[RMDB]
RNA sequence: GGGAACGACUCGAGUAGAGUCGAAAAGAGCGUCGAGAGACGAAGAGAAGUGCACCGAUCAGCAAUGGAGAACGUAAUGGUGCACAAGAGUAAGUCAGUGUAACGUUCUCUGGGCACUGGAGGCAGAGCACCAGUAUCCUUUCGAGGAUACUGGUGCAAAAGAAACAACAACAACAAC
Reactivity to DMS in 0.01 (KOAc 150mM, MgCl2 10mM, bicine 150mM(pH8.5), 24C), signal-to-noise 3, nucleotides 027 to 126: g000a030g030c010g000u000c010g000a200g020a300g000a020c030g000a020a080g060a160g020a190a070g000u000g000c000a070c000c020g020a110u020c120a050g000c280a080a070u000g000g000a010g010a000a030c020g000u000a150a110u040g010g020u000g000c010a020c010a000a020g030a170g010u060a020a070g000u020c070a050g000u000g000u010a070a070c030g000u010u000c000u000c010u020g000g020g010c010a030c020u010g000g000a080g030g020c120a100g000a130
Reactivity to 2A3 in 0.01 (KOAc 150mM, MgCl2 10mM, bicine 150mM(pH8.5), 24C), signal-to-noise 3, nucleotides 027 to 126: g060a000g000c030g010u010c040g030a020g020a000g000a120c030g010a130a020g070a000g020a270a010g000u000g000c000a020c020c000g050a170u200c050a030g150c030a110a040u150g020g000a040g000a010a010c010g010u050a060a080u300g020g000u010g000c020a000c000a020a000g040a000g080u270a160a030g030u070c100a030g050u030g040u200a060a040c000g010u000u000c000u000c000u000g020g000g000c030a000c030u020g010g000a000g050g000c010a000g020a010
The data come from the RNA Mapping Database (RMDB), library OK1LIB. Chemical mapping of a 177-nucleotide RNA with DMS and 2A3. For 2A3, 2,012 sequencing reads were counted. For DMS, 3,211 sequencing reads were counted. Conditions: 150 mM KOAc, 10 mM MgCl2 and 150 mM bicine (pH 8.5), 24 C. DMS adducts were read by reverse transcription with MarathonRT.